[RMDB]
RNA sequence: GGGAACGACUCGAGUAGAGUCGAAAAAAAACUAUAUACAAGUGGUGGUAGUCUGCCACUCUAAGGGGACGCCUUUAGAAGAAGAGGCUAGGGGGUAUUCCGGUGUGGGAUACUUAGUAAUAUGCAAUUGACGUCGACAACUUCGGUUGUCGACGAACAUGUAACAGUUCUUCGGAACUGUUACAUGAAAAGAAACAACAACAACAAC
Reactivity to 2A3 in 0.01 (KOAc 150mM, MgCl2 10mM, bicine 150mM(pH8.5), 24C), signal-to-noise 1, nucleotides 027 to 156: a000a000a010a000c250u300a270u150a110u150a180c120a240a000g040u060g020g000u000g020g040u010a000g040u000c010u000g020c000c000a060c000u000c000u000a000a010g030g010g020g040a010c060g170c000c010u000u060u040a020g000a050a000g020a030a000g010a020g080g000c000u000a000g020g000g000g000g060u000a010u010u020c050c030g230g030u190g040u160g060g010g000a000u020a030c000u080u020a010g010u080a060a160u150a090u210g040c040a060a060u050u210g140a080c020g000u000c000g010a000c000a010a000c000u010u050c150g110g020u000u010g000u000c000g000a000c000g000a000a000
About this RNA:
Source: RMDB library M2RFPK, as collected in RNAgym. Structure probing data (2A3) for a 207-nucleotide construct. The reactions ran in a buffer of 150 mM KOAc, 10 mM MgCl2 and 150 mM bicine (pH 8.5), at 24 C. For 2A3 the reverse transcriptase was SuperScript II with manganese.